The data come from the RNA Mapping Database (RMDB), library TTRDES.
An RNA of 177 nucleotides, treated with DMS and 2A3 and read out base by base.
For 2A3, 3,783 sequencing reads were counted.
Values cover nucleotides 27 to 126.
RNA sequence: GGGAACGACUCGAGUAGAGUCGAAAAGAUAUGGAUCCAGGGCUCGAUAAGCUGGUAUCGGAAACGAUACCCAGCUUUUGACGAGCCGCUGGAUCCUAAGUCAAACCGCUCUCCUUCGGGAGAGCGGGCCUGUUAGUACGUUCGCGUACUAACAGGCAAAAGAAACAACAACAACAAC
Reactivity to DMS in 0.01 (KOAc 150mM, MgCl2 10mM, bicine 150mM(pH8.5), 24C), signal-to-noise 3, nucleotides 027 to 126: g000a010u000a250u010g010g000a020u010c000c000a010g010g020g020c010u000c010g020a120u000a010a010g020c010u000g000g020u000a000u010c010g020g020a110a060a130c000g020a000u000a000c210c070c040a010g000c010u000u000u000u000g000a240c170g010a010g020c000c000g000c010u000g010g010a000u000c000c000u000a010a090g000u000c020a070a140a300c000c000g000c000u000c000u000c000c000u000u000c260g030g010g000a030g010a010g000c000g000g000
Reactivity to 2A3 in 0.01 (KOAc 150mM, MgCl2 10mM, bicine 150mM(pH8.5), 24C), signal-to-noise 1, nucleotides 027 to 126: g020a000u040a010u090g000g010a010u000c010c010a000g030g010g000c010u020c060g170a190u110a300a010g020c010u000g000g020u000a010u000c010g000g020a050a040a000c010g000a000u020a020c050c040c010a000g020c020u040u010u010u060g120a130c060g000a000g010c020c000g000c000u000g000g000a000u010c000c000u000a000a000g000u000c000a000a090a130c010c010g010c000u000c000u000c020c010u070u180c300g190g000g000a000g000a000g010c000g010g000
Conditions: 150 mM KOAc, 10 mM MgCl2 and 150 mM bicine (pH 8.5), 24 C.
Reactivities are rounded to 0.1 and cut off at 0 and 3.
DMS adducts were read by reverse transcription with MarathonRT.